[RMDB]
RNA sequence: GGGAACGACUCGAGUAGAGUCGAAAACGGUCCUGCCAUGAGACCGUAACGAGGACAUGUCGCCUCGAAUGGCGUCGGGGAGCCGGCAGCUUACCCCAAGGAUGAGCGCCUAAUGACGGUACCCGGGUAUACGCUACCCCGUUCGCGGGGUAGCGAAUCCAUGUUUUGUCUUCGGACAAAACAUGGAAAAAGAAACAACAACAACAAC
Reactivity to 2A3 in 0.01 (KOAc 150mM, MgCl2 10mM, bicine 150mM(pH8.5), 24C), signal-to-noise 1, nucleotides 027 to 156: c000g000g000u000c000c000u000g000c020c010a070u060g020a050g000a040c030c000g070u020a020a020c000g000a000g020g000a040c020a150u190g140u210c190g010c000c030u010c000g040a010a000u010g000g000c020g110u030c000g000g010g000g000a150g140c000c000g080g020c010a070g000c020u010u070a050c060c010c000c020a020a120g040g010a150u040g000a000g000c010g040c020c040u200a250a100u070g030a000c020g000g050u040a020c010c010c000g000g000g050u120a100u020a110c000g000c000u000a000c000c000c000c020g050u020u000c150g000c050g040g000g000g000u000a000g020c010g000a000a000